[RMDB]
RNA sequence: GGGAACGACUCGAGUAGAGUCGAAAAUGCACUUCGUAGGUUACGUCUGCGUUAACAACGUUACAGUUAAUUAUAACUGCAAACAAUAACAAUUCUUACGCUGUAGCUGCCUAAACACCAGCAUAGCGUGAUCCGUCUGACUUCACCCAAGGGUUAGCAAUAAUCCCCACUUCGGUGGGGAUUAUUGAAAAGAAACAACAACAACAAC
Reactivity to 2A3 in 0.01 (KOAc 150mM, MgCl2 10mM, bicine 150mM(pH8.5), 24C), signal-to-noise 5, nucleotides 027 to 156: u140g000c050a040c120u050u040c060g010u000a000g010g030u090u020a010c010g020u000c020u000g000c020g130u070u060a010a020c010a000a000c010g000u010u010a020c000a020g020u010u030a070a160u260u120a230u080a250a050c010u050g070c090a070a110a090c030a100a180u220a110a020c080a060a120u230u040c050u100u080a000c000g000c000u000g010u040a060g010c000u010g000c000c000u020a040a010a000c010a000c010c000a000g000c000a020u030a010g000c000g000u000g020a020u060c060c070g060u040c040u010g030a040c000u050u040c120a060c060c020c010a030a040g060g000g010u020u020a020g000
Reactivity to DMS in 0.01 (KOAc 150mM, MgCl2 10mM, bicine 150mM(pH8.5), 24C), signal-to-noise 2, nucleotides 027 to 156: u000g010c080a080c020u000u000c050g020u000a040g020g010u000u010a040c080g040u000c080u000g000c040g020u010u030a060a170c060a090a090c040g020u000u000a030c020a010g000u000u000a060a190u010u010a150u000a030a040c010u000g020c000a040a030a120c050a080a100u000a040a060c070a070a080u010u030c070u000u010a070c060g060c000u020g050u010a140g060c010u000g090c030c120u000a110a070a160c080a080c300c000a020g000c050a040u020a010g030c000g040u000g000a060u000c010c070g010u000c000u020g000a070c060u000u000c020a100c010c050c020a130a230g000g020g000u000u000a080g000
Source information:
Conditions: 150 mM KOAc, 10 mM MgCl2 and 150 mM bicine (pH 8.5), 24 C. Structure probing data (2A3 and DMS) for a 207-nucleotide construct. For 2A3 the reverse transcriptase was SuperScript II with manganese.